The record gives the reactivity of an RNA of 177 nucleotides to 2A3 and DMS. For DMS, 2,399 sequencing reads were counted. For 2A3, 4,134 sequencing reads were counted. Source: RMDB library TTRDEL, as collected in RNAgym. Reactivities are given for positions 27 through 126. The RNA was probed in 150 mM KOAc, 10 mM MgCl2 and 150 mM bicine (pH 8.5) at 24 C.
[RMDB]
RNA sequence: GGGAACGACUCGAGUAGAGUCGAAAAGAUAUGGAGUUGAAAGACUCCAACAGCGUGGGCUCGGAAACGAGCCGUAACAUCGACAUGGAGGGGAGACUCCUAAGUCAAAUCCCGCUUCGGCGGGAAACACAUACGAACAGUUCGCUGUUCGUAUGUGAAAAGAAACAACAACAACAAC
Reactivity to 2A3 in 0.01 (KOAc 150mM, MgCl2 10mM, bicine 150mM(pH8.5), 24C), signal-to-noise 2, nucleotides 027 to 126: g080a010u130a080u230g000g010a010g010u010u030g120a150a130a030g090a080c020u010c020c000a000a030c050a010g050c010g030u100g010g000g030c000u000c090g000g000a020a060a050c000g050a000g010c000c000g000u000a000a000c010a210u290c040g040a040c030a130u150g000g010a020g020g020g020g010a120g030a070c000u000c030c010u010a180a010g010u000c010a040a020a200u030c000c030c000g020c000u070u070c250g110g000c000g020g000g000a000a010a000
Reactivity to DMS in 0.01 (KOAc 150mM, MgCl2 10mM, bicine 150mM(pH8.5), 24C), signal-to-noise 3, nucleotides 027 to 126: g000a100u020a260u000g000g020a040g010u010u000g000a160a140a090g000a080c000u000c000c000a030a070c130a090g020c060g000u000g000g010g020c000u000c040g030g000a100a070a240c030g010a010g020c010c000g000u010a010a100c150a050u010c110g000a070c080a070u010g010g000a060g000g000g010g000a300g000a040c020u000c000c010u000a030a140g010u010c030a070a100a130u000c000c000c000g010c000u000u020c170g040g010c000g000g010g000a000a030a100